[RMDB]
Overview
Structure probing data (2A3) for a 207-nucleotide construct. Values cover nucleotides 27 to 156. The 2A3 profile rests on 1,071 reads.
RNA sequence: GGGAACGACUCGAGUAGAGUCGAAAAGGCGCCGAUUCGUCGAUGGGUAAGACGAAGGACGGCGAAGAGAACACGGUGCGCGACGGUCUCGCCGACCUGCGACGCACCGUGGUCGCGAUCGCCGCGAAGCUCGGGGCCAAGGCGUGAGCGCGCCGACGAGUGGCACGAGGUUCGCCUCGUGCCACUCAAAAGAAACAACAACAACAAC
Reactivity to 2A3 in 0.01 (KOAc 150mM, MgCl2 10mM, bicine 150mM(pH8.5), 24C), signal-to-noise 2, nucleotides 027 to 156: g040g010c130g020c050c010g060a060u060u030c000g000u010c000g050a200u250g080g000g060u220a080a000g030a010c000g010a020a040g070g080a080c000g010g000c020g000a020a000g020a000g000a030a000c010a000c040g000g000u020g000c040g000c010g030a080c010g030g020u020c100u040c140g150c070c010g000a000c000c010u020g060c040g250a170c000g000c030a000c000c000g000u000g000g000u020c010g040c080g050a190u030c020g000c000c000g000c030g020a000a020g020c010u000c000g000g010g060g010c010c020a010a060g000g000c030g000u050g070a070g060c140g000c010g000c010c000g000a030c060